[RMDB]
RNA sequence: GGGAACGACUCGAGUAGAGUCGAAAAAGCCGAGGACUACGGUCCUCGGCAACAACCGUCACAACGGCUUCCUGGCGUGACGGGGUUAACCCCAACGGAGCAAGUGCGAGCUUACGAGAUCGCACAAUUUAGGAGAAUUCCUUCGGGAAUUCUCCAAUCUUAAUAUAUCCUUCGGGAUAUAUUAAGAAAAAGAAACAACAACAACAAC
Reactivity to 2A3 in 0.01 (KOAc 150mM, MgCl2 10mM, bicine 150mM(pH8.5), 24C), signal-to-noise 1, nucleotides 027 to 156: a000g000c000c000g000a000g000g000a010c000u060a020c300g040g000u000c000c000u000c020g000g000c000a000a000c010a000a000c020c000g000u000c000a000c010a020a070c070g030g000c070u280u120c020c040u060g000g000c040g010u000g000a000c010g000g000g010g000u080u280a090a110c020c000c020c000a000a090c080g060g000a020g070c040a200a030g030u000g020c000g000a020g020c060u090u070a040c110g030a040g030a080u020c000g020c010a000c030a000a020u090u120u180a070g010g000a000g000a000a000u000u000c000c060u050u080c300g110g000g000a010a000u000u000c010u000c000c020a000a000